[RMDB]
RNA sequence: GGGAACGACUCGAGUAGAGUCGAAAAACUAAAUGAGGUGAAAAAAGCAUAAGAAAAAGUGGAAAGUGGUGCCUUGGGCUGAGGGCAGUACAAAUUCCCCUUAGUACUGAAAUUUUGGACUGGCUUCAGGAAGAGCUAAGCCAGCAGAAUACCCUAACGUACCACCAUCAUUCGUGAUGGUGGUACGAAAAGAAACAACAACAACAAC
Reactivity to 2A3 in 0.01 (KOAc 150mM, MgCl2 10mM, bicine 150mM(pH8.5), 24C), signal-to-noise 2, nucleotides 027 to 156: a000c050u060a010a040a020u110g030a040g000g050u050g070a120a050a030a050a000a020g050c060a110u110a170a060g080a050a080a050a060a000g030u060g010g040a100a050a030g080u070g050g000u010g030c010c030u040u060g100g040g000c030u050g010a020g000g000g030c010a000g060u020a000c040a010a060a020u050u060c000c020c000c040u070u090a030g000u040a020c010u010g040a070a120a230u060u040u040u060g060g050a060c000u000g000g020c010u040u030c050a030g060g050a090a160g020a020g050c000u000a000a000g000c010c000a000g000c000a000g000a040a010u090a120c010c020c040u080a030a000

The record gives the reactivity of an RNA of 207 nucleotides to 2A3.
The 2A3 profile rests on 1,194 reads.